[RMDB]
RNA sequence: GGGAACGACUCGAGUAGAGUCGAAAAAUCAUUGUCUAAGGCGAAAUUUUGUAACACAUUAGGGCAUCCCAUCAGUAAGCCGACGUGGGCCGAUUCCUCCGAUUCUGAUAUUAUUGACCGAUUUGUGACCCUAAGUCUGGUUCGCCAGACUUAGGGUAAAAGAAACAACAACAACAAC
Reactivity to DMS in 0.01 (KOAc 150mM, MgCl2 10mM, bicine 150mM(pH8.5), 24C), signal-to-noise 1, nucleotides 027 to 126: a050u010c040a070u000u000g020u000c040u000a060a100g010g030c030g020a030a100a110u000u010u000u010g010u000a070a060c050a150c040a090u000u000a060g000g000g040c030a080u020c010c000c030a070u010c080a070g000u000a070a170g010c010c030g010a040c080g010u000g000g010g040c020c000g020a100u020u000c040c010u000c080c040g010a120u000u010c010u000g000a060u000a070u000u000a130u000u010g000a100c030c040g000a100u010u000u000g010u010g010